[RMDB]
RNA sequence: GGGAACGACUCGAGUAGAGUCGAAAAGAAGGACUCGGACGCGAACCCGUGAGUGGAAACCUCGUUCUUUAUUGGGGAGUACACUCGAGGAGUGGAAGGCGGGGAGGGCGGGGAGGAGUGUUACCCUAGAGGCUUGGCUUCGGCCAAGCCAAAAGAAACAACAACAACAAC
Reactivity to DMS in 0.01 (KOAc 150mM, MgCl2 10mM, bicine 150mM(pH8.5), 24C), signal-to-noise 2, nucleotides 027 to 129: g050a050a150g000g070a030c060u040c080g020g010a140c020g030c130g020a170a140c080c040c010g040u110g000a050g090u010g040g010a050a070a180c040c000u010c090g000u050u100c090u020u030u020a110u040u050g060g000g020g000a040g010u050a020c000a000c010u000c000g040a060g000g000a030g070u020g000g070a130a100g040g000c090g030g000g000g080a050g030g000g010c080g010g020g020g020a030g030g030a090g040u020g000u020u020a060c100c130c010u130a130g000a170
Reactivity to 2A3 in 0.01 (KOAc 150mM, MgCl2 10mM, bicine 150mM(pH8.5), 24C), signal-to-noise 2, nucleotides 027 to 129: g090a050a000g000g000a050c060u000c100g010g000a000c060g060c040g000a030a040c010c050c000g000u090g050a000g020u000g000g000a010a000a010c000c000u020c030g040u220u160c040u140u190u180a240u070u250g020g000g000g000a010g050u020a000c030a000c010u000c000g000a080g000g010a050g030u070g000g020a100a000g000g090c130g000g000g000g100a220g000g000g020c070g000g000g010g000a020g000g000a050g000u030g000u010u050a130c040c040c010u000a020g050a040